[RMDB]
Notes
The record gives the reactivity of an RNA of 177 nucleotides to DMS and 2A3. The RNA was probed in 150 mM KOAc, 10 mM MgCl2 and 150 mM bicine (pH 8.5) at 24 C. 2A3 adducts were read by reverse transcription with SuperScript II with manganese. Values cover nucleotides 27 to 126.
RNA sequence: GGGAACGACUCGAGUAGAGUCGAAAAACUAGUAUGUACAGGGGUGAGUUGACCUGUCAUUUAGACUGCUGACCAUCAACUCACCGGUCAGCUGGAUGAUGUCCACAGAGUACGACAUCAGUACUCAGUGAAAGGAUGCGUUCGCGUAUCUUUUCACAAAAGAAACAACAACAACAAC
Reactivity to DMS in 0.01 (KOAc 150mM, MgCl2 10mM, bicine 150mM(pH8.5), 24C), signal-to-noise 9, nucleotides 027 to 126: a100c020u000a030g010u010a040u000g000u050a010c020a040g010g010g010g020u000g000a040g010u000u000g000a040c100c060u010g010u000c020a060u010u030u030a080g000a090c080u010g010c080u020g000a060c060c170a230u010c040a030a040c040u000c040a030c070c060g000g010u000c010a020g010c010u010g000g010a060u010g010a090u020g000u000c020c050a090c200a120g000a030g020u000a020c020g000a150c200a100u050c150a100g000u000a010c010u000c010a140
Reactivity to 2A3 in 0.01 (KOAc 150mM, MgCl2 10mM, bicine 150mM(pH8.5), 24C), signal-to-noise 9, nucleotides 027 to 126: a010c030u030a020g060u070a120u230g050u080a010c020a030g170g030g010g040u040g030a040g010u010u020g040a040c010c040u030g010u000c000a010u040u030u030a090g030a070c050u050g040c050u030g050a030c030c020a020u040c020a010a040c020u010c030a020c020c000g000g000u000c000a010g000c000u020g010g030a070u090g010a020u070g080u030c010c000a070c060a080g030a010g020u030a020c050g090a030c100a170u120c020a040g000u010a010c000u010c040a010